Conditions: 150 mM KOAc, 10 mM MgCl2 and 150 mM bicine (pH 8.5), 24 C. The record gives the reactivity of an RNA of 177 nucleotides to DMS and 2A3.
RNA sequence: GGGAACGACUCGAGUAGAGUCGAAAAGGAAGCAUCUGGCUAGUGGCCAGUCCUUCCGGCGUAAUAAUUUGCGGUUCAUCUUCGGCAUUCACCCGCAGGGUACAGAGCGUUAAUGCCAGCAGUAAGGUCGAUUCCAGAAGUUCGCUUCUGGAAUCGAAAAAGAAACAACAACAACAAC
Reactivity to DMS in 0.01 (KOAc 150mM, MgCl2 10mM, bicine 150mM(pH8.5), 24C), signal-to-noise 4, nucleotides 027 to 126: g000g000a010a010g040c120a070u050c010u000g000g000c000u010a130g010u030g000g020c000c000a000g010u000c300c010u000u000c010c010g000g000c110g010u020a040a070u040a110a120u000u030u000g000c140g000g000u010u000c050a080u010c040u010u010c070g000g000c060a080u000u010c130a070c110c050c030g000c110a150g000g000g070u030a080c130a120g010a120g000c050g000u000u000a050a070u010g000c040c030a110g000c060a090g000u010a070a090g000g010
Reactivity to 2A3 in 0.01 (KOAc 150mM, MgCl2 10mM, bicine 150mM(pH8.5), 24C), signal-to-noise 4, nucleotides 027 to 126: g000g000a000a000g000c040a040u100c020u000g000g000c020u080a040g140u170g300g000c000c010a000g000u010c000c010u000u000c000c010g000g020c050g060u040a040a080u120a100a120u140u080u120g030c020g030g010u050u080c000a120u010c040u060u080c010g050g000c010a050u030u040c020a050c010c000c020g020c040a090g060g000g000u120a100c040a060g040a000g040c050g030u030u050a030a000u070g000c000c000a010g020c000a030g010u100a100a010g080g070